[RMDB]
RNA sequence: GGGAACGACUCGAGUAGAGUCGAAAACGGCAAAUGCUCCUAAUACAGCAUAGUUCAUUGCGGUUUCUGCUCCGCCACCUAACCCACCAGUGAAGGUUUUUACCGUAGUGGUUAGCGCUUCGCUGAAAUGAAUUAUGGGUUUCGACCCAUAAUUCAUAAAAGAAACAACAACAACAAC
Reactivity to 2A3 in 0.01 (KOAc 150mM, MgCl2 10mM, bicine 150mM(pH8.5), 24C), signal-to-noise 4, nucleotides 027 to 126: c010g040g010c020a080a060a100u060g010c010u040c020c030u140a100a060u130a130c070a020g000c010a030u020a070g060u070u110c040a050u100u090g030c030g030g000u030u100u030c050u040g020c030u030c030c010g040c010c010a040c000c010u010a060a070c000c010c010a030c010c020a030g000u000g000a010a010g030g000u010u060u040u140u100a020c000c000g020u080a090g130u140g090g020u000u020a010g000c110g070c070u010u010c010g000c010u020g030a120a120
Reactivity to DMS in 0.01 (KOAc 150mM, MgCl2 10mM, bicine 150mM(pH8.5), 24C), signal-to-noise 6, nucleotides 027 to 126: c120g010g010c060a050a100a080u000g000c010u010c060c070u000a100a100u000a140c270a020g000c020a030u000a120g010u010u000c100a110u010u000g010c040g000g000u010u000u010c050u010g010c060u000c020c050g010c040c050a060c040c020u000a070a140c030c010c020a110c230c020a020g020u000g010a040a040g000g000u000u000u010u010u000a030c010c020g000u000a120g020u010g020g010u000u000a040g000c030g020c030u000u000c030g020c020u010g000a090a080

An RNA of 177 nucleotides, treated with 2A3 and DMS and read out base by base.
High 2A3 reactivity points to a flexible backbone, as in loops and unpaired stretches.
The reactions ran in a buffer of 150 mM KOAc, 10 mM MgCl2 and 150 mM bicine (pH 8.5), at 24 C.
For DMS the reverse transcriptase was MarathonRT.
The 2A3 profile rests on 6,385 reads.
In probing experiments dimethyl sulfate is read out at A N1 and C N3, which are open when not base-paired.
Reactivities are given for positions 27 through 126.
2A3 adducts were read by reverse transcription with SuperScript II with manganese.